The record gives the reactivity of an RNA of 177 nucleotides to 2A3 and DMS.
For DMS the reverse transcriptase was MarathonRT.
The DMS profile rests on 5,378 reads.
Source: RMDB library TTRDEL, as collected in RNAgym.
The RNA was probed in 150 mM KOAc, 10 mM MgCl2 and 150 mM bicine (pH 8.5) at 24 C.
The 2A3 profile rests on 5,843 reads.
[RMDB]
RNA sequence: GGGAACGACUCGAGUAGAGUCGAAAAGAUAUGGACUACCGCCCUGUUUCUUCGAUGAAAUCGGAAACGAUGGAGAAGAACAGUAACAAGUAGUCCUAAGUCAAAGGCCGUUGUUCGCAACGGCCAAGUAAAAGGAGAACUUCGGUUCUCCUUUUACAAAAGAAACAACAACAACAAC
Reactivity to 2A3 in 0.01 (KOAc 150mM, MgCl2 10mM, bicine 150mM(pH8.5), 24C), signal-to-noise 3, nucleotides 027 to 126: g040a020u060a050u160g000g000a000c000u010a000c010c020g010c000c020c030u020g060u030u300u070c030u020u000c040g300a300u050g000a030a030a000u010c010g010g030a050a070a000c010g000a000u020g010g020a030g000a000a000g000a010a010c000a000g010u060a080a110c070a190a000g000u000a000g000u010c000c000u000a110a020g050u040c050a070a030a120g010g000c000c000g000u000u020g020u040u180c300g000c180a000a010c010g000g030c020c000a000a000
Reactivity to DMS in 0.01 (KOAc 150mM, MgCl2 10mM, bicine 150mM(pH8.5), 24C), signal-to-noise 5, nucleotides 027 to 126: g020a040u000a300u000g000g010a010c000u010a010c010c040g000c300c220c000u000g000u000u000u010c010u000u000c000g000a090u010g010a060a080a010u000c000g000g000a120a080a150c010g000a010u000g000g010a060g010a010a010g000a020a010c010a010g010u010a060a100c190a180a060g000u000a010g000u000c010c000u000a010a100g000u000c050a100a090a130g000g020c000c000g020u000u000g010u000u010c180g020c010a020a000c020g000g010c000c010a000a030